Description: This 177-nucleotide RNA was probed chemically with 2A3 and DMS. It was measured as part of the RMDB library TTRDES.

[RMDB]
RNA sequence: GGGAACGACUCGAGUAGAGUCGAAAAGAUAUGGAUCGGACAUGGGAGUCACUGAUCGGAAACGAUCAAACUGACGAAGAACAUGCCGAUCCUAAGUCAAACGAUCACAUGUUCGCAUGUGAUCGAAGAUAUUGAUCGUCUUCGGACGAUCAAUAUCAAAAGAAACAACAACAACAAC
Reactivity to 2A3 in 0.01 (KOAc 150mM, MgCl2 10mM, bicine 150mM(pH8.5), 24C), signal-to-noise 4, nucleotides 027 to 126: g010a000u020a000u050g000g010a000u010c020g000g070a110c040a000u020g040g010g120a300g010u000c010a000c020u010g000a010u000c000g000g020a000a000a000c000g000a000u000c000a030a130a120c270u090g000a010c000g190a300a220g050a080a020c010a000u010g000c000c000g000a010u010c000c000u000a000a000g000u000c020a100a070a100c020g000a000u010c000a000c000a010u030g050u110u140c300g010c200a010u020g000u010g000a010u010c000g000a010a010
Reactivity to DMS in 0.01 (KOAc 150mM, MgCl2 10mM, bicine 150mM(pH8.5), 24C), signal-to-noise 3, nucleotides 027 to 126: g010a020u000a020u020g000g010a020u000c000g020g010a140c010a020u000g000g020g000a080g010u010c010a020c190u000g010a010u000c010g010g010a010a000a030c000g000a000u010c000a000a030a130c300u000g020a010c040g000a110a170g030a170a300c010a000u000g000c000c000g000a020u000c000c000u000a000a050g000u010c010a130a140a230c040g020a000u000c000a020c010a000u000g010u000u030c250g000c010a000u000g010u010g010a000u000c000g010a030a040

Source information:
For 2A3 the reverse transcriptase was SuperScript II with manganese. The reactions ran in a buffer of 150 mM KOAc, 10 mM MgCl2 and 150 mM bicine (pH 8.5), at 24 C.